Structure probing data (2A3) for a 207-nucleotide construct. Conditions: 150 mM KOAc, 10 mM MgCl2 and 150 mM bicine (pH 8.5), 24 C. The data come from the RNA Mapping Database (RMDB), library M2RFPK. For 2A3, 928 sequencing reads were counted.
[RMDB]
RNA sequence: GGGAACGACUCGAGUAGAGUCGAAAAACGAGGCCGUGCCUACUACGGUAGGCACGGGCUCGAAUUACGUUCAUCUACUUAAUCGUAGACGCAUCAAUACAUCAUUCAUGGAACGGGGGAUGGUGAAACUAGAAUCAAACGUUCGCGUUUGAUUCAACACCACAAGUAGCUUCGGCUACUUGUGGUGAAAAGAAACAACAACAACAAC
Reactivity to 2A3 in 0.01 (KOAc 150mM, MgCl2 10mM, bicine 150mM(pH8.5), 24C), signal-to-noise 1, nucleotides 027 to 156: a020c010g000a000g060g080c000c000g000u010g020c050c000u010a000c000u020a000c250g080g020u000a000g000g050c000a000c000g010g000g020c000u000c000g010a000a040u160u110a040c010g010u010u010c000a000u000c030u000a010c000u080u080a090a010u060c030g000u000a000g020a050c010g000c000a100u130c100a110a050u040a240c000a000u000c000a010u010u020c000a000u010g090g000a000a040c010g020g000g010g000g000a000u000g010g000u010g040a110a010a010c120u130a110g000a000a010u000c000a000a000a010c000g030u090u020c260g010c000g120u000u010u010g000a010u010u020c010a000a010